[RMDB]
RNA sequence: GGGAACGACUCGAGUAGAGUCGAAAAUUGAACAAUUAAAAGCACAAUCUCAUCCAGUUUGUCAUUAUAUCUAUGAUUUAGUCGGACUGGAACAUCAUUUGCAACAUAUUACAUCGUCAUUGCCGAGGAUGUCCCAGGCUUUCGAGCCUGGGACAUCAAAAGAAACAACAACAACAAC
Reactivity to 2A3 in 0.01 (KOAc 150mM, MgCl2 10mM, bicine 150mM(pH8.5), 24C), signal-to-noise 1, nucleotides 027 to 126: u040u040g100a140a020c100a000a120u270u300a180a200a040a000g180c000a000c040a020a250u000c000u070c080a080u000c000c000a000g040u000u120u080g080u080c020a000u000u200a040u000a000u080c020u020a220u060g000a000u120u030u040a000g000u000c000g000g000a000c000u000g020g020a020a060c000a020u000c000a000u140u300u300g070c220a100a000c000a250u100a000u020u120a040c080a020u000c000g140u000c040a020u120u230g000c020c080g000a080g180

Annotation
Chemical mapping of a 177-nucleotide RNA with 2A3. The reactions ran in a buffer of 150 mM KOAc, 10 mM MgCl2 and 150 mM bicine (pH 8.5), at 24 C.